[RMDB]
RNA sequence: GGGAACGACUCGAGUAGAGUCGAAAAAGCUGAUGCAGAAUCAGUGUUAUCGUCUGAUGAUAAUGAUUCAAUUGAGGAAAUAUCAAUUAAAAAGGUUAAAUAUGAUCCUCAUGAAACCAACAAAGAGUCAGAGUAUAAUUUAAUUGGUUCUUCCGAACAUAAUGAGUCCAUUCGUGGACUCAUUAUGAAAAGAAACAACAACAACAAC
Reactivity to DMS in 0.01 (KOAc 150mM, MgCl2 10mM, bicine 150mM(pH8.5), 24C), signal-to-noise 3, nucleotides 027 to 156: a130g060c010u000g010a060u000g020c100a150g030a130a040u000c010a030g010u010g040u000u000a040u000c060g020u000c120u000g000a030u000g000a190u000a110a060u010g000a070u000u000c030a100a110u000u000g000a050g020g010a040a110a060u000a030u010c040a030a150u000u000a060a100a120a130a100g000g000u000u000a090a040a060u000a010u010g000a140u010c000c010u010c020a070u000g020a090a050a090c010c030a060a190c100a080a080a130g000a300g000u000c010a030g000a110g010u010a040u000a060a060u000u000u010a080a120u010u000g000g000u000u000c040u000u010c020c010g000a290a200
Reactivity to 2A3 in 0.01 (KOAc 150mM, MgCl2 10mM, bicine 150mM(pH8.5), 24C), signal-to-noise 5, nucleotides 027 to 156: a000g040c040u040g010a040u060g030c070a020g190a100a010u010c000a000g000u000g040u040u030a060u040c130g120u020c040u040g030a010u020g000a020u070a090a070u090g050a030u020u040c060a080a130u080u070g000a000g010g020a010a080a000u050a020u030c040a030a050u110u170a120a140a110a050a040g100g020u080u100a040a160a000u060a030u030g040a140u010c000c000u000c010a000u000g000a030a010a010c090c020a020a040c030a070a130a020g060a010g020u000c010a000g010a010g090u070a060u010a120a040u060u120u120a070a070u050u040g040g000u040u020c000u060u000c050c030g060a100a040
Source: RMDB library OK3TST, as collected in RNAgym. The record gives the reactivity of an RNA of 207 nucleotides to DMS and 2A3. DMS (dimethyl sulfate) methylates the pairing face of unpaired adenines and cytosines. For 2A3, 2,998 sequencing reads were counted.